[RMDB]
RNA sequence: GGGAACGACUCGAGUAGAGUCGAAAACAGCCCGAGGUAAAAGAAGUUGCACCUGUCUAUGAGGCUGAUACCGAACAGACACAGAAUGUUACUGUUAAACCUAAGAGGUUACGCAAAAAGCGUAAUGUAACCGUUCUCUUCGGAGAACGGAAAAGAAACAACAACAACAAC
Reactivity to DMS in 0.01 (KOAc 150mM, MgCl2 10mM, bicine 150mM(pH8.5), 24C), signal-to-noise 2, nucleotides 027 to 129: c200a100g000c000c000c000g020a070g000g000u020a030a080a100a010g020a090a060g010u070u010g060c010a030c050c040u000g020u030c040u050a070u030g030a280g060g000c040u000g020a150u020a170c050c020g000a190a050c050a010g010a070c070a100c170a110g020a070a180u010g000u000u020a110c000u040g030u030u070a010a010a010c000c000u000a190a100g030a080g020g020u000u050a030c030g020c040a020a030a040a150a080g000c010g030u010a060a000u050g020u040a060a190
Reactivity to 2A3 in 0.01 (KOAc 150mM, MgCl2 10mM, bicine 150mM(pH8.5), 24C), signal-to-noise 5, nucleotides 027 to 129: c050a050g090c000c000c030g040a020g070g050u080a110a150a040a070g190a080a060g000u080u130g050c020a030c030c040u040g040u060c010u030a090u150g060a090g050g000c020u050g050a040u080a100c010c010g000a040a010c010a000g060a020c010a000c020a100g070a160a040u040g020u040u060a090c000u010g040u120u140a100a060a030c010c000u040a070a000g070a050g140g040u000u020a000c000g000c020a110a090a080a140a070g000c000g000u010a000a000u060g030u040a020a030